[RMDB]
RNA sequence: GGGAACGACUCGAGUAGAGUCGAAAAGAUAUGGAAGCCUACAGCUGAUGACCCACAGGGAACUCGGAAACGAGGGAACUGUGGCAAGGCUGAGGCUUCCUAAGUCAAAGUCAUGUUCGCAUGACAAGCCUAACCGAUAGUUCGCUAUCGGUUAGGCAAAAGAAACAACAACAACAAC
Reactivity to DMS in 0.01 (KOAc 150mM, MgCl2 10mM, bicine 150mM(pH8.5), 24C), signal-to-noise 1, nucleotides 027 to 126: g000a000u000a300u000g000g000a000a010g070c000c010u000a220c010a010g080c000u000g010a090u000g000a020c300c000c020a000c000a000g000g000g120a300a190c000u000c000g010g000a120a120a190c000g000a000g000g060g000a300a220c000u000g020u000g000g000c050a000a010g000g040c000u010g010a070g030g020c000u000u000c000c000u000a000a030g000u000c030a140a030a080g000u000c000a040u000g010u000u030c160g000c000a050u000g000a030c020a120a150
Reactivity to 2A3 in 0.01 (KOAc 150mM, MgCl2 10mM, bicine 150mM(pH8.5), 24C), signal-to-noise 1, nucleotides 027 to 126: g010a050u050a050u150g000g010a010a000g000c020c000u200a300c150a000g000c050u110g010a300u090g020a160c010c050c000a000c010a010g000g020g000a010a020c000u000c000g000g050a110a060a040c010g010a020g000g000g020a030a020c010u010g000u020g000g000c000a030a080g000g040c000u000g000a010g000g000c000u000u000c000c000u010a000a020g000u000c040a090a040a060g000u000c000a000u040g010u030u100c290g060c160a000u000g000a010c020a100a010
Conditions: 150 mM KOAc, 10 mM MgCl2 and 150 mM bicine (pH 8.5), 24 C. Chemical mapping of a 177-nucleotide RNA with DMS and 2A3. The data come from the RNA Mapping Database (RMDB), library TTRDEL. High DMS reactivity at an A or C suggests that its Watson-Crick edge is free.